Chemical mapping of a 177-nucleotide RNA with DMS and 2A3. Values are in units of 0.01, from 0 to 300, in steps of 10. The reactions ran in a buffer of 150 mM KOAc, 10 mM MgCl2 and 150 mM bicine (pH 8.5), at 24 C. In probing experiments dimethyl sulfate is read out at A N1 and C N3, which are open when not base-paired.

RNA sequence: GGGAACGACUCGAGUAGAGUCGAAAAGAUAUGGACACUGGUGACAUGCGUUUAUCGGAAACGAUUUACGCAACAGCACCUGUGUCCUAAGUCAAAAGAUAUUCAUCGGUUCGCCGAUGAAUAUCAAGACAUACUAUUUGUUCGCAAAUAGUAUGUCAAAAGAAACAACAACAACAAC
Reactivity to DMS in 0.01 (KOAc 150mM, MgCl2 10mM, bicine 150mM(pH8.5), 24C), signal-to-noise 9, nucleotides 027 to 126: g010a010u000a090u010g000g000a010c000a000c000u000g000g010u000g010a120c080a150u000g010c000g020u000u000u000a000u000c000g010g000a020a020a060c000g010a010u000u000u000a000c000g030c000a030a070c300a140g010c000a010c000c000u000g010u000g010u000c000c000u000a000a040g000u000c010a100a080a130a110g000a010u000a000u000u000c000a000u000c000g010g000u000u010c250g020c000c000g010a000u000g000a000a000u000a000u000c000a090a090
Reactivity to 2A3 in 0.01 (KOAc 150mM, MgCl2 10mM, bicine 150mM(pH8.5), 24C), signal-to-noise 9, nucleotides 027 to 126: g010a010u020a010u050g000g010a000c010a000c030u050g000g030u040g130a280c150a300u050g010c000g000u000u000u010a010u000c000g000g000a010a010a000c000g000a000u000u000u020a000c000g000c010a050a060c140a070g000c000a000c000c000u000g000u000g000u000c000c000u000a000a000g000u000c010a020a020a040a180g010a000u010a000u010u010c000a000u000c000g010g060u060u090c300g060c100c000g000a000u000g000a000a000u000a000u000c000a000a010